[RMDB]
RNA sequence: GGGAACGACUCGAGUAGAGUCGAAAACAGCGCACGACGACGGCGUCGCGGCCGUCUACGACAUCGCGGUUGCGCGUCGGCGCCGACCCGCUUGAGCGGUCCCCGACGCGUCAACGUCGCGCCGGCUUGCACCUCUAAACUUCGGUUUAGAGGUGCAAAAAGAAACAACAACAACAAC
Reactivity to 2A3 in 0.01 (KOAc 150mM, MgCl2 10mM, bicine 150mM(pH8.5), 24C), signal-to-noise 2, nucleotides 027 to 126: c020a000g040c010g030c050a060c140g080a020c020g000a000c020g080g000c000g040u060c070g000c020g090g020c020c040g000u000c010u070a040c110g140a040c010a100u120c050g020c040g000g000u020u070g000c000g000c000g010u050c010g000g080c070g050c010c020g030a020c030c030c000g040c040u100u140g090a030g050c050g000g000u040c000c000c000c000g000a000c000g010c030g030u060c030a030a030c020g150u140c020g000c010g030c000c020g060g000c050u000
Reactivity to DMS in 0.01 (KOAc 150mM, MgCl2 10mM, bicine 150mM(pH8.5), 24C), signal-to-noise 1, nucleotides 027 to 126: c130a090g010c040g020c000a060c180g000a100c150g040a110c050g010g000c070g000u040c200g000c170g060g010c020c000g010u010c030u010a040c170g060a140c090a080u050c030g030c010g020g000u020u000g000c000g000c000g000u000c010g010g010c080g050c160c130g020a040c000c030c010g000c090u050u030g070a110g040c050g000g000u010c000c000c000c000g000a000c000g050c000g000u030c010a000a000c000g000u050c040g000c030g030c150c010g000g000c010u000
Source: RMDB library RFM100, as collected in RNAgym. Chemical mapping of a 177-nucleotide RNA with 2A3 and DMS. Reactivities are given for positions 27 through 126. The reactions ran in a buffer of 150 mM KOAc, 10 mM MgCl2 and 150 mM bicine (pH 8.5), at 24 C.